This 177-nucleotide RNA was probed chemically with 2A3 and DMS. For DMS, 1,295 sequencing reads were counted. It was measured as part of the RMDB library TTRDEL. The reactions ran in a buffer of 150 mM KOAc, 10 mM MgCl2 and 150 mM bicine (pH 8.5), at 24 C. Reactivities are given for positions 27 through 126. DMS adducts were read by reverse transcription with MarathonRT.
[RMDB]
RNA sequence: GGGAACGACUCGAGUAGAGUCGAAAAGAUAUGGAAAGAACUACAGCGGACCGGAGCGUUGAAAUCGGAAACGAUGGAGCUCCUAGUACGCUGCUUUCCUAAGUCAAAAGCGCUGUUCGCAGCGCAAUCUAUCACCGUACUUCGGUACGGUGAUAGAAAAAGAAACAACAACAACAAC
Reactivity to 2A3 in 0.01 (KOAc 150mM, MgCl2 10mM, bicine 150mM(pH8.5), 24C), signal-to-noise 1, nucleotides 027 to 126: g020a000u060a050u150g000g010a010a080a000g010a040a000c120u190a040c300a000g010c010g020g000a000c020c030g020g000a010g000c010g160u300u070g030a070a010a010u000c010g040g030a080a020a020c020g000a010u010g040g000a030g000c000u000c000c010u030a000g000u000a010c030g000c030u010g010c010u000u010u000c000c000u010a130a020g130u070c020a020a070a100a070g000c000g000c020u030g030u120u140c300g050c120a020g000c000g000c020a000a020
Reactivity to DMS in 0.01 (KOAc 150mM, MgCl2 10mM, bicine 150mM(pH8.5), 24C), signal-to-noise 2, nucleotides 027 to 126: g010a080u000a300u010g020g000a010a000a010g000a050a020c080u030a300c000a000g000c010g010g020a130c300c100g010g000a010g020c000g000u010u020g000a120a110a010u000c000g020g000a100a060a120c000g010a000u000g010g010a110g000c010u000c000c000u000a020g000u000a120c020g000c000u000g000c000u000u000u010c010c000u000a050a130g010u020c050a020a070a140a110g020c000g030c000u000g010u000u010c150g030c000a000g030c020g000c000a020a020